Structure probing data (2A3) for a 177-nucleotide construct. Source: RMDB library OK1LIB, as collected in RNAgym. The 2A3 profile rests on 247 reads.

[RMDB]
RNA sequence: GGGAACGACUCGAGUAGAGUCGAAAAUAGGAUACCGCCCACAGUAAUGCCAGCUAAAUACCAUAGUGCACGGGUCAUGAUAAUAUGUAUUGGUAGUUUAGGUGACAUCACGCCAAUGUUAGCGAUGUCCCGACUUCACGUUCGCGUGAAGUCGGGAAAAAGAAACAACAACAACAAC
Reactivity to 2A3 in 0.01 (KOAc 150mM, MgCl2 10mM, bicine 150mM(pH8.5), 24C), signal-to-noise 1, nucleotides 027 to 126: u040a000g240g050a000u000a140c300c000g000c000c000c000a000c000a000g020u040a190a030u110g000c000c000a000g000c070u000a000a000a000u140a000c070c070a000u050a000g020u020g110c220a090c060g010g000g000u140c090a040u000g300a000u000a300a000u070a090u300g000u180a300u040u040g040g010u000a220g110u240u300u000a050g180g000u000g050a000c000a000u130c000a000c000g000c000c000a170a040u250g000u130u130a000g000c110g000a000u130g020